[RMDB]
RNA sequence: GGGAACGACUCGAGUAGAGUCGAAAAGAUAUGGAGACCGUACCAGCAACAGCUCGGAAACGAGACAUGCUGUGUACCGGUCUCCUAAGUCAAAAGCAGUAUACUGGCUUCGGCCAGUAUACUGCAAGAUUACCAACAACUUCGGUUGUUGGUAAUCAAAAGAAACAACAACAACAAC
Reactivity to 2A3 in 0.01 (KOAc 150mM, MgCl2 10mM, bicine 150mM(pH8.5), 24C), signal-to-noise 2, nucleotides 027 to 126: g010a020u080a020u120g010g000a000g000a010c020c010g010u000a000c010c000a010g030c010a010a090c040a220g040c000u010c010g040g020a090a080a060c010g010a010g000a040c020a040u070g010c000u000g060u050g020u160a010c020c000g000g000u000c000u010c000c000u010a000a000g020u000c020a000a000a050a200g000c000a000g000u010a000u000a000c000u000g000g010c030u050u150c300g040g000c000c000a000g000u000a000u000a000c000u010g010c000a000a000
Reactivity to DMS in 0.01 (KOAc 150mM, MgCl2 10mM, bicine 150mM(pH8.5), 24C), signal-to-noise 3, nucleotides 027 to 126: g010a030u000a300u000g000g000a000g000a010c000c000g020u000a000c000c010a000g010c000a040a040c220a180g010c000u000c000g000g000a110a090a190c000g000a000g000a040c080a170u000g000c000u020g000u010g020u000a000c100c050g020g010u000c000u000c010c000u000a000a060g000u010c040a110a060a160a110g000c000a000g010u000a010u000a020c000u000g000g010c000u000u000c190g010g000c000c000a010g010u010a000u000a000c000u000g000c000a000a020